[RMDB]
RNA sequence: GGGAACGACUCGAGUAGAGUCGAAAAGAGCCGACAGAGAAGUCGGGAAGCGACGAGAGAGAAUAGAAAACAUUGGAAUUCGAGAUACUGCCACAAAAUGACAGACGUCGCCAUAUUCUCGGAGAAGCCUGAGCGUAAAUUUCGAUUUACGCUCAGGAAAAGAAACAACAACAACAAC
Reactivity to 2A3 in 0.01 (KOAc 150mM, MgCl2 10mM, bicine 150mM(pH8.5), 24C), signal-to-noise 4, nucleotides 027 to 126: g040a010g130c000c020g010a010c010a000g250a010g080a300a000g030u010c030g010g000g010a020a040g020c010g030a010c060g010a020g010a000g010a000g030a190a020u180a180g080a070a120a050a010c120a150u070u170g060g080a050a070u040u050c010g000a010g000a040u030a100c000u020g000c030c000a070c040a030a050a010a180u200g010a070c030a030g060a010c040g010u010c000g000c000c010a010u040a050u080u010c020u000c000g070g000a060g050a070a000g030
Reactivity to DMS in 0.01 (KOAc 150mM, MgCl2 10mM, bicine 150mM(pH8.5), 24C), signal-to-noise 3, nucleotides 027 to 126: g000a170g000c000c020g000a000c010a090g030a180g020a170a050g000u010c000g000g000g030a140a110g010c010g010a030c000g000a300g040a100g010a220g010a050a050u010a110g010a170a040a100a080c140a120u020u000g030g000a080a080u000u030c010g030a060g000a140u020a130c020u000g020c070c030a060c090a050a050a110a230u000g000a070c050a000g000a200c030g010u000c020g000c010c060a100u020a070u000u010c000u000c000g030g000a150g000a080a120g000